[RMDB]
RNA sequence: GGGAACGACUCGAGUAGAGUCGAAAAUAAGCGUGUCGGAGGGUUGUCUUCGUCAUCAACACACACAGUUUAUAAUAACUGGCAAAUCAAACAAUAAUUUCGCAGUAGCUGCCUAAUCGCACUCUGCAUCGCCUAACAGCAUUUCCUAUGUGCUGUUUACCCCUUAAACGUUCGCGUUUAAGGGGUAAAAAGAAACAACAACAACAAC
Reactivity to 2A3 in 0.01 (KOAc 150mM, MgCl2 10mM, bicine 150mM(pH8.5), 24C), signal-to-noise 1, nucleotides 027 to 156: u110a020a000g070c010g020u060g050u100c000g020g020a030g000g070g000u220u000g050u010c000u010u020c010g110u020c020a020u050c020a030a030c020a000c020a000c020a010c000a070g020u010u010u080a300u080a160a030u170a000a000c020u010g000g000c020a060a030a130u200c040a020a100a100c060a170a030u200a120a080u080u190u100c190g030c000a030g010u270a020g050c150u000g020c010c040u060a070a020u190c070g030c000a000c010u000c000u010g000c080a030u020c020g050c020c000u020a030a000c000a000g000c000a000u030u040u160c020c020u090a070u110g010u000g010c000u000g010u000u000